Chemical mapping of a 177-nucleotide RNA with 2A3 and DMS. The RNA was probed in 150 mM KOAc, 10 mM MgCl2 and 150 mM bicine (pH 8.5) at 24 C. Values cover nucleotides 27 to 126. The DMS profile rests on 1,347 reads. It was measured as part of the RMDB library OK2TRN. DMS adducts were read by reverse transcription with MarathonRT.
[RMDB]
RNA sequence: GGGAACGACUCGAGUAGAGUCGAAAACUAAGUUGAGCAUGCCUAUUUUUUACCCAUUUCAAACAUAGAUUCUUGUCCAACUGAAGCUUAAUUUUGGAUCUGAGCCCAAGUUAGAUGAGCCAAAAUCCAUAGGUAGUCACUUCGGUGACUACCUAUGAAAAGAAACAACAACAACAAC
Reactivity to 2A3 in 0.01 (KOAc 150mM, MgCl2 10mM, bicine 150mM(pH8.5), 24C), signal-to-noise 1, nucleotides 027 to 126: c030u050a090a070g090u080u040g060a030g010c050a000u030g080c040c010u010a160u030u030u000u000u100u260a140c000c010c010a100u060u260u160c120a090a070a020c040a030u060a060g060a140u090u050c010u040u050g050u000c000c010a040a010c010u040g010a040a010g000c030u040u050a030a060u070u260u200u130g100g000a060u010c060u080g080a030g020c020c000c020a020a000g000u020u030a000g000a040u040g020a010g000c030c010a050a130a050a040u050c020
Reactivity to DMS in 0.01 (KOAc 150mM, MgCl2 10mM, bicine 150mM(pH8.5), 24C), signal-to-noise 2, nucleotides 027 to 126: c030u000a090a070g020u010u010g000a070g000c010a050u000g010c200c030u000a010u010u000u000u010u000u000a150c070c090c060a090u010u020u000c150a120a100a090c110a030u000a050g020a060u010u000c030u010u000g010u010c000c000a010a020c070u000g000a120a190g000c040u000u000a010a070u000u000u000u000g010g000a060u000c080u020g000a060g030c000c010c030a070a050g000u000u000a070g000a040u010g020a070g000c300c080a020a040a020a070u000c090